[RMDB]
RNA sequence: GGGAACGACUCGAGUAGAGUCGAAAAAGUCUACUUUUCGAAGUAGACUGUGCUCCCACAUGAUCGAGGUCUCACCGUGUCAUUGCCCACGACACUCGGGCGUAAUAGAUUGGUUCGCCAAUCUAAACCAUCUGUUUAAUUUCGAUUAAACAGAUGGAAAAGAAACAACAACAACAAC
Reactivity to 2A3 in 0.01 (KOAc 150mM, MgCl2 10mM, bicine 150mM(pH8.5), 24C), signal-to-noise 7, nucleotides 027 to 126: a010g000u000c000u000a000c000u040u060u030u120c200g060a010a000g000u000a000g000a000c000u000g010u050g020c020u020c000c080c000a030c020a040u220g040a090u090c060g040a030g020g070u020c030u020c070a070c040c030g020u020g030u050c030a070u010u200g040c010c010c000a040c040g050a020c020a020c060u050c030g020g010g000c020g000u040a100a070u010a070g000a000u000u010g020g040u030u030c200g030c060c000a000a000u000c000u010a040a010a010
Reactivity to DMS in 0.01 (KOAc 150mM, MgCl2 10mM, bicine 150mM(pH8.5), 24C), signal-to-noise 9, nucleotides 027 to 126: a010g010u000c000u000a000c000u000u000u000u010c150g010a010a010g010u000a010g000a010c000u000g000u000g020c170u000c010c010c000a160c200a070u010g010a050u010c050g010a070g010g000u000c030u000c060a110c070c050g010u000g000u000c030a160u000u010g010c030c030c030a150c110g010a060c080a060c040u000c080g000g000g010c050g000u000a080a100u000a010g000a020u000u000g000g000u000u010c220g010c000c000a010a010u000c000u000a020a090a220